[RMDB]
RNA sequence: GGGAACGACUCGAGUAGAGUCGAAAAGGAGAGUCCCGCUCCUUCAGGAGAACGAUCUCGGUUGUUUCUCUGAAGGCAUGAUCACCCCGUCCGAUGCGGAAGUUCGUGCUUCCGUCGAACGCGAAAGUAAAACCCUAAAGCUUCGGCUUUAGGGUAACUAACGUAGGACGUUCGCGUCCUACGUUAGAAAAGAAACAACAACAACAAC
Reactivity to 2A3 in 0.01 (KOAc 150mM, MgCl2 10mM, bicine 150mM(pH8.5), 24C), signal-to-noise 1, nucleotides 027 to 156: g060g020a030g000a000g090u010c000c000c000g000c020u020c010c040u010u070c150a220g000g110a090g040a070a010c010g010a000u030c000u070c170g090g000u010u010g000u030u140u090c000u020c000u000g010a010a000g070g000c050a070u180g000a050u060c060a020c000c020c020c000g000u010c030c000g050a090u180g030c000g000g000a000a000g030u190u300c150g060u300g070c010u020u000c010c000g020u030c010g020a010a010c020g010c060g030a110a020a040g080u180a030a120a030a030c010c010c010u020a000a000a000g000c000u010u160c180g020g010c000u000u030u000a000g000g010g010u000a010a000
Reactivity to DMS in 0.01 (KOAc 150mM, MgCl2 10mM, bicine 150mM(pH8.5), 24C), signal-to-noise 1, nucleotides 027 to 156: g030g030a130g000a090g000u000c020c000c010g030c030u000c020c000u020u010c010a020g000g030a020g020a040a010c010g000a070u000c040u000c190g050g000u000u000g000u000u000u010c010u010c030u020g010a040a030g010g000c080a100u000g000a060u020c040a140c020c000c000c000g000u000c000c010g040a110u000g030c050g010g020a080a100g020u010u000c300g030u110g000c010u000u000c000c000g020u000c010g010a020a000c050g010c020g000a190a120a120g000u000a050a050a120a070c000c020c000u000a010a040a030g020c020u000u010c300g030g000c000u000u000u000a000g020g070g000u000a000a010